[RMDB]
RNA sequence: GGGAACGACUCGAGUAGAGUCGAAAAGUGCCUCGUCGGCCCGGCAUGCCAACCUGAUCCGAAGUUCAAGGUGGUUUCUCUGGCCUUCCAGAGAGAUGCGCGUCGGAAGAACCGACGUACAAACCUUAAAACAAAACGACGUUCGCGUCGUUUUGAAGAUAUGGCGCAUGUUCGCAUGCGCCAUAUCAAAAGAAACAACAACAACAAC
Reactivity to 2A3 in 0.01 (KOAc 150mM, MgCl2 10mM, bicine 150mM(pH8.5), 24C), signal-to-noise 2, nucleotides 027 to 156: g030u000g050c000c000u010c000g030u000c000g050g000c050c000c040g050g000c010a080u040g000c010c060a100a080c020c020u010g010a090u100c040c100g200a150a030g040u050u030c050a070a030g000g000u000g010g000u020u140u010c040u000c000u010g020g060c040c030u200u190c010c010a010g020a000g000a010g000a050u110g050c050g020c030g050u000c000g000g040a070a040g040a090a060c010c010g000a000c010g010u010a020c090a000a110a170c010c020u190u240a030a080a020a090c010a000a020a000a000c000g020a000c010g030u060u040c290g000c040g020u010c000g000u020u000u000u000g000a030a000